About this RNA:
Structure probing data (2A3 and DMS) for a 207-nucleotide construct. For 2A3 the reverse transcriptase was SuperScript II with manganese.
RNA sequence: GGGAACGACUCGAGUAGAGUCGAAAACGUUGCUGCUGCAUCAUCUACUCAUAGAAAGGUUGCGUCUAGCACUACACAAUAUGAUCACAAAGAAAGCUGUAAUGGUUUAUAUUACCAGGGUUCUUGUUAUAUAUUACAUUCAGACUACCAGUUAUUCCACGUAUCCAUUUUUCGAAAUGGAUACGUGAAAAGAAACAACAACAACAAC
Reactivity to 2A3 in 0.01 (KOAc 150mM, MgCl2 10mM, bicine 150mM(pH8.5), 24C), signal-to-noise 4, nucleotides 027 to 156: c080g020u010u010g010c020u010g010c020u020g020c000a030u040c010a050u030c040u070a060c030u060c050a120u120a140g090a040a090a030g100g030u030u030g030c010g040u050c110u070a020g010c000a000c050u140a020c060a000c020a070a040u090a060u210g100a060u090c050a010c050a070a150a020g090a100a110a020g060c010u040g020u190a070a040u020g020g000u010u110u050a030u020a010u050u080a020c030c070a010g120g040g060u270u180c020u020u050g000u040u010a000u000a010u000a010u080u100a030c000a030u010u030c010a000g050a090c010u040a060c030c020a010g050u070u050a080u100u030c040
Reactivity to DMS in 0.01 (KOAc 150mM, MgCl2 10mM, bicine 150mM(pH8.5), 24C), signal-to-noise 2, nucleotides 027 to 156: c060g010u000u000g000c020u010g000c000u010g000c040a180u010c100a060u000c050u000a110c050u000c030a120u000a130g030a100a160a140g000g000u030u000g010c040g000u000c110u000a150g060c050a150c010u000a110c030a070c080a060a120u000a090u000g000a150u010c040a070c030a040a110a140g000a080a110a110g000c010u000g020u010a050a050u000g000g020u000u000u000a030u010a070u040u000a060c050c070a050g020g000g030u000u000c040u000u000g010u010u000a060u000a060u000a060u010u000a080c040a120u010u020c060a090g010a100c020u000a080c060c040a120g020u010u000a140u000u000c000